[RMDB]
The record gives the reactivity of an RNA of 207 nucleotides to 2A3. For 2A3 the reverse transcriptase was SuperScript II with manganese. The reactions ran in a buffer of 150 mM KOAc, 10 mM MgCl2 and 150 mM bicine (pH 8.5), at 24 C.
RNA sequence: GGGAACGACUCGAGUAGAGUCGAAAAACUCGUGUGUACUCACUCACUCGAACGUGAGUGAACACGUGUGAGAGUGUACGAACGAGAGAGUACACUCACACACGAUCUCUCUCGUGAGUUCGUACGUGUGUUCGAACUCACGAUCGAGUGAGAACGACAUCCCAGUGCCAUUCGUGGCACUGGGAUGAAAAGAAACAACAACAACAAC
Reactivity to 2A3 in 0.01 (KOAc 150mM, MgCl2 10mM, bicine 150mM(pH8.5), 24C), signal-to-noise 3, nucleotides 027 to 156: a010c090u070c040g040u080g010u020g020u100a070c030u010c080a020c000u000c000a000c000u000c020g050a140a110c130g120u130g050a000g000u020g020a010a030c090a000c030g000u000g000u000g010a150g000a000g030u010g030u030a030c060g050a300a020c200g030a080g000a030g000a020g240u010a010c000a000c020u010c000a010c000a000c000a010c000g020a040u020c020u000c000u000c010u010c020g000u010g020a000g000u010u020c000g000u010a020c050g200u240g190u190g020u160u040c030g000a020a000c000u000c010a010c000g000a030u020c010g000a000g010u010g000a010g010a030a000c030g050a010